[RMDB]
RNA sequence: GGGAACGACUCGAGUAGAGUCGAAAACGCAACAUCUCAGGUUGAUGACCUUCUCGGCGAGAUCAAUAAAAUGGCCGCUCAAGAGCUGCGGACCGUAGUGACAGUAUUAACUAAACGUAUGGCGGAAACACAGAAGUUAGUUCGCUAACUUCUGUGUAAAAGAAACAACAACAACAAC
Reactivity to 2A3 in 0.01 (KOAc 150mM, MgCl2 10mM, bicine 150mM(pH8.5), 24C), signal-to-noise 3, nucleotides 027 to 126: c020g020c010a020a040c020a120u070c030u010c090a060g090g000u060u040g090a110u060g090a070c010c000u080u050c040u020c030g000g030c020g030a110g010a140u070c040a090a120u120a150a080a020a040u050g030g020c000c000g000c020u040c060a110a100g000a030g090c040u030g020c020g030g040a090c030c020g010u040a030g020u020g040a020c010a030g020u030a080u150u100a100a060c050u070a090a100a000c040g050u080a050u090g050g000c010g020g030a010a170
Reactivity to DMS in 0.01 (KOAc 150mM, MgCl2 10mM, bicine 150mM(pH8.5), 24C), signal-to-noise 5, nucleotides 027 to 126: c100g000c060a060a080c050a060u000c060u020c120a090g010g010u010u000g020a100u000g010a090c040c040u000u000c040u000c100g010g000c030g010a070g010a090u000c030a060a050u010a070a050a100a120u010g010g020c000c010g010c030u010c040a100a080g010a110g000c070u000g000c030g000g010a100c030c040g000u000a030g010u000g000a080c170a080g010u000a070u010u010a050a070c100u000a050a090a070c090g010u010a060u000g010g020c040g010g010a100a090